[RMDB]
RNA sequence: GGGAACGACUCGAGUAGAGUCGAAAAGAUAUGGAUUGCGAACUACCCUCGCUAAAGCGUUGAAAUCGGAAACGAUGGAGCUUUAGGAGGGCGCAAUCCUAAGUCAAAACUGUACUUCGGUACAGAACUUAAUAAGAGAGUUCGCUCUCUUAUUAAGAAAAGAAACAACAACAACAAC
Reactivity to 2A3 in 0.01 (KOAc 150mM, MgCl2 10mM, bicine 150mM(pH8.5), 24C), signal-to-noise 4, nucleotides 027 to 126: g020a030u070a030u110g000g000a000u000u020g010c000g030a060a020c050u160a080c300c010c000u000c010g250c260u010a010a000a010g000c020g280u300u060g040a070a070a000u010c000g010g040a070a050a010c010g000a010u010g000g030a030g000c000u000u010u000a010g000g000a000g000g000g000c020g000c000a000a000u000c000c000u010a080a010g000u010c010a010a020a170a210c010u000g010u010a010c010u040u100c300g120g000u010a000c000a000g010a030a040
Reactivity to DMS in 0.01 (KOAc 150mM, MgCl2 10mM, bicine 150mM(pH8.5), 24C), signal-to-noise 6, nucleotides 027 to 126: g010a030u000a300u000g000g000a000u000u000g000c000g010a070a040c070u010a300c030c010c010u000c000g020c000u000a000a010a010g010c000g000u000u020g000a070a150a020u000c000g010g000a100a050a140c000g000a010u000g000g010a140g020c000u000u000u000a010g000g000a010g000g000g000c010g000c010a000a010u000c000c000u000a020a070g010u010c040a110a080a100a140c000u000g000u000a000c000u010u020c180g030g010u000a000c000a010g000a090a150
Structure probing data (2A3 and DMS) for a 177-nucleotide construct. The data come from the RNA Mapping Database (RMDB), library TTRDEL. Conditions: 150 mM KOAc, 10 mM MgCl2 and 150 mM bicine (pH 8.5), 24 C.